[RMDB]
RNA sequence: GGGAACGACUCGAGUAGAGUCGAAAAACCGCUACCCGGAAUGCCAGCCAAAGGCCGUGAUUGAAAACUACGCGCAAUAUGCUGGCGUAAAGCCGGAGCAGGUGCUGGUCAGCCGCGGCGCGGAUGAUCAGGGCCUAAUCUUCGGAUUAGGCCCUGAAAAAGAAACAACAACAACAAC
Reactivity to DMS in 0.01 (KOAc 150mM, MgCl2 10mM, bicine 150mM(pH8.5), 24C), signal-to-noise 6, nucleotides 027 to 126: a080c010c010g020c020u000a180c070c000c020g010g000a140a060u030g010c000c010a010g000c000c030a140a220a230g010g010c000c000g000u000g000a050u000u010g010a120a100a150a170c130u020a020c010g020c170g000c010a020a050u020a240u070g000c000u000g000g010c000g000u020a020a080a170g010c010c010g020g000a050g000c020a050g010g010u010g000c030u000g000g000u010c100a070g000c000c020g010c090g010g000c300g000c020g000g000a030u010g000a070
Reactivity to 2A3 in 0.01 (KOAc 150mM, MgCl2 10mM, bicine 150mM(pH8.5), 24C), signal-to-noise 4, nucleotides 027 to 126: a000c000c000g010c000u060a120c010c030c000g010g050a050a060u170g000c010c000a000g010c000c010a170a060a010g110g000c020c000g010u040g060a130u080u190g090a100a100a050a010c090u130a040c020g080c000g000c030a000a050u150a050u300g000c040u040g010g000c000g010u020a010a040a000g020c000c010g010g010a000g020c030a060g020g100u130g070c040u020g000g030u060c040a020g020c000c000g020c130g080g000c060g000c000g020g040a050u060g020a010